An RNA of 170 nucleotides, treated with DMS and 2A3 and read out base by base.
[RMDB]
RNA sequence: GGGAACGACUCGAGUAGAGUCGAAAACUCGUAUCUCCGAGAGGAGACGAGAAGGAGGCGGAUCUCCCUUUGCCAUCCGAGGGGACUGCGUCCUCCUUACGGAUGCCCAGGUCGGACCGCGAGGAGGUAAGGCCUUUGUUCGCAAAGGCCAAAAGAAACAACAACAACAAC
Reactivity to DMS in 0.01 (KOAc 150mM, MgCl2 10mM, bicine 150mM(pH8.5), 24C), signal-to-noise 6, nucleotides 027 to 129: c000u010c040g020u040a110u040c000u010c020c000g020a210g030a210g050g010a060g030a030c040g000a030g030a130a070g000g000a040g010g040c040g040g020a050u030c080u030c000c010c020u000u000u000g040c050c070a040u000c030c000g000a070g000g010g010g000a040c110u060g030c110g030u000c000c000u020c000c000u030u030a060c040g030g020a050u040g020c060c020c050a020g020g010u000c090g000g060a090c000c040g000c050g060a110g000g020a040g000g000u060a090a060
Reactivity to 2A3 in 0.01 (KOAc 150mM, MgCl2 10mM, bicine 150mM(pH8.5), 24C), signal-to-noise 8, nucleotides 027 to 129: c000u000c010g020u080a120u060c010u000c010c010g040a040g010a020g060g010a000g020a010c000g010a010g010a020a030g020g030a020g000g000c020g010g050a110u020c070u050c030c000c000u030u030u070g060c040c020a050u040c020c000g000a010g000g020g010g010a000c020u120g060c130g060u070c010c010u060c000c000u010u060a040c020g020g010a040u070g020c000c000c000a000g000g080u060c040g020g030a040c000c000g000c010g030a050g020g020a030g000g020u040a060a040

Values are in units of 0.01, from 0 to 300, in steps of 10.
Source: RMDB library 15KLIB, as collected in RNAgym.
As a SHAPE reagent, 2A3 marks flexible, mostly unpaired nucleotides at the ribose 2'-OH.
Reactivities are given for positions 27 through 129.
For 2A3, 23,308 sequencing reads were counted.
2A3 adducts were read by reverse transcription with SuperScript II with manganese.